Structure probing data (DMS and 2A3) for a 177-nucleotide construct.
[RMDB]
RNA sequence: GGGAACGACUCGAGUAGAGUCGAAAAGAUAUGGAUUCCUCUGCGGUAGCGAUGAAAGUACUUCGGAAACGAAGUACUGGAGCUGCGCAGAGGGAAUCCUAAGUCAAAAGGCAAACUUCGGUUUGCCGUCCCCUCAGUAGUUCGCUACUGAGGGGACAAAAGAAACAACAACAACAAC
Reactivity to DMS in 0.01 (KOAc 150mM, MgCl2 10mM, bicine 150mM(pH8.5), 24C), signal-to-noise 3, nucleotides 027 to 126: g010a030u000a300u010g000g000a040u000u000c000c000u010c010u010g010c020g020g010u010a020g030c000g000a140u000g000a100a130a020g000u000a000c000u000u000c020g000g000a130a080a260c010g010a040a010g030u000a000c000u000g000g000a050g030c000u000g030c010g020c030a000g000a020g000g010g010a000a010u010c000c000u000a040a130g000u000c020a080a080a160a170g000g000c000a000a000a010c000u000u020c210g020g010u000u000u000g010c010c010
Reactivity to 2A3 in 0.01 (KOAc 150mM, MgCl2 10mM, bicine 150mM(pH8.5), 24C), signal-to-noise 3, nucleotides 027 to 126: g030a010u090a040u250g000g000a000u010u000c010c000u000c010u000g000c080g300g200u240a030g020c020g300a300u040g000a070a050a010g000u000a000c010u000u000c030g020g000a040a100a070c010g000a000a000g000u000a000c020u020g010g000a020g000c020u030g040c010g000c000a000g020a030g000g000g000a020a020u000c000c000u020a080a020g050u010c030a010a050a150a170g010g010c000a000a000a000c020u070u190c300g140g000u010u000u000g000c010c000

Record summary
Conditions: 150 mM KOAc, 10 mM MgCl2 and 150 mM bicine (pH 8.5), 24 C. For DMS, 2,778 sequencing reads were counted. 2A3 adducts were read by reverse transcription with SuperScript II with manganese. The data come from the RNA Mapping Database (RMDB), library TTRDES.